Notes: Structure probing data (DMS) for a 177-nucleotide construct. The reactions ran in a buffer of 150 mM KOAc, 10 mM MgCl2 and 150 mM bicine (pH 8.5), at 24 C.
RNA sequence: GGGAACGACUCGAGUAGAGUCGAAAACCUUCCUUCUUCGGUGAUCCCGUCUCUCCUGUUCGGUGAACCCUCCCGGGUGUUUCCUCUUCCUAGGUCCGGAGUCGACCUCCAUCUGAUCCGUCCUGGCGAUAUGAAUCAGCUUCGGCUGAUUCAUAUCAAAAGAAACAACAACAACAAC
Reactivity to DMS in 0.01 (KOAc 150mM, MgCl2 10mM, bicine 150mM(pH8.5), 24C), signal-to-noise 1, nucleotides 027 to 126: c020c020u010u010c020c020u000u010c060u000u000c040g010g010u010g010a110u010c020c030c020g000u000c040u000c020u010c050c020u000g000u000u010c060g010g030u000g000a070a120c050c010c010u000c050c040c080g010g000g020u020g000u000u000u000c020c020u010c040u000u020c020c030u000a040g030g000u000c050c050g010g000a080g030u000c030g010a070c030c010u010c040c040a060u010c050u010g000a100u000c030c040g000u000c050c020u000g030g010c200
The DMS profile rests on 1,761 reads.